[RMDB]
RNA sequence: GGGAACGACUCGAGUAGAGUCGAAAAUUAGAAACAAAGAGGUAAACGAUUCGGGCCGUUUAAGCGGGUCAGUACCCCACGGAACUGGCCGUUACUCAAAUGCGAGUCUGACGCGCCUCCUACGCGACGAAAACGGAAACUUCGGUUUCCGUUUUCGAAAAGAAACAACAACAACAAC
Reactivity to 2A3 in 0.01 (KOAc 150mM, MgCl2 10mM, bicine 150mM(pH8.5), 24C), signal-to-noise 2, nucleotides 027 to 126: u080u050a040g070a000a090a000c050a010a080a000g020a020g060g040u130a090a050a050c000g040a040u130u140c030g020g040g000c010c010g010u000u020u120a120a000g160c070g000g190g000u000c030a000g000u090a060c010c050c060c080a090c130g030g000a050a060c000u000g030g000c000c000g000u030u030a010c000u020c050a000a000a100u160g000c020g060a090g090u000c000u020g020a030c000g000c010g000c030c000u000c020c000u080a090c040g030c000g020a100
Reactivity to DMS in 0.01 (KOAc 150mM, MgCl2 10mM, bicine 150mM(pH8.5), 24C), signal-to-noise 2, nucleotides 027 to 126: u060u090a060g000a190a030a080c090a000a110a130g040a020g070g000u000a070a070a140c030g000a110u050u000c010g080g000g000c040c030g000u000u030u010a000a040g030c300g010g000g000u000c000a040g010u000a180c010c020c080c150a090c300g000g000a040a010c000u000g000g060c020c000g000u010u020a130c070u000c090a000a070a020u000g000c150g000a030g000u040c080u010g010a050c000g030c220g000c000c000u000c010c000u010a190c190g040c140g040a190
The data come from the RNA Mapping Database (RMDB), library OK1LIB. This 177-nucleotide RNA was probed chemically with 2A3 and DMS. 2A3 adducts were read by reverse transcription with SuperScript II with manganese. Reactivities are given for positions 27 through 126. The RNA was probed in 150 mM KOAc, 10 mM MgCl2 and 150 mM bicine (pH 8.5) at 24 C. For 2A3, 1,174 sequencing reads were counted.